Annotation
This 207-nucleotide RNA was probed chemically with 2A3 and DMS. As a SHAPE reagent, 2A3 marks flexible, mostly unpaired nucleotides at the ribose 2'-OH. For 2A3, 1,284 sequencing reads were counted. Values cover nucleotides 27 to 156. The data come from the RNA Mapping Database (RMDB), library OK3TST. Conditions: 150 mM KOAc, 10 mM MgCl2 and 150 mM bicine (pH 8.5), 24 C.
RNA sequence: GGGAACGACUCGAGUAGAGUCGAAAAAGUCGUAUAAGGUUAACUGGGGUAGUGUACCAAUAGGUGAUGAUAUCAGUACGUUAUAGUUGGAAAGCAAUGUACUAAAACCUUGUGAGGAAGAAGGUAUUGCGGUAGCUAUUGCCUGACCCAACUCCAGCGACAACAACCUAUUCGUAGGUUGUUGUCGAAAAGAAACAACAACAACAAC
Reactivity to 2A3 in 0.01 (KOAc 150mM, MgCl2 10mM, bicine 150mM(pH8.5), 24C), signal-to-noise 3, nucleotides 027 to 156: a000g050u090c020g020u070a070u050a150a070g140g070u120u080a050a040c060u050g000g000g000g000u040a050g080u080g060u090a070c060c030a140a080u100a110g000g050u030g070a020u040g010a010u020a030u190c020a000g020u010a040c060g000u030u050a090u070a190g060u040u080g100g030a040a030a000g010c040a080a000u030g000u040a030c010u050a030a060a020a020c010c000u030u050g090u020g100a060g070g030a040a080g020a020a030g040g020u070a110u050u150g100c050g000g030u040a020g010c040u030a030u020u070g000c010c000u020g020a030c010c000c030a050a010c010u040c020c030a050g020
Reactivity to DMS in 0.01 (KOAc 150mM, MgCl2 10mM, bicine 150mM(pH8.5), 24C), signal-to-noise 1, nucleotides 027 to 156: a020g030u010c050g100u010a130u000a030a070g030g040u010u000a060a130c020u000g010g040g040g030u000a040g050u010g000u040a040c020c030a050a140u000a030g000g040u000g000a140u020g040a120u000a020u000c030a030g000u000a060c020g000u000u020a140u000a060g000u000u000g000g000a080a080a080g030c080a060a000u000g010u000a090c050u010a030a070a130a060c000c020u000u000g040u000g000a140g060g010a140a130g000a120a020g000g010u090a050u000u000g030c090g000g060u000a030g010c090u030a100u000u000g010c030c020u000g010a290c040c010c000a000a090c020u020c030c020a040g010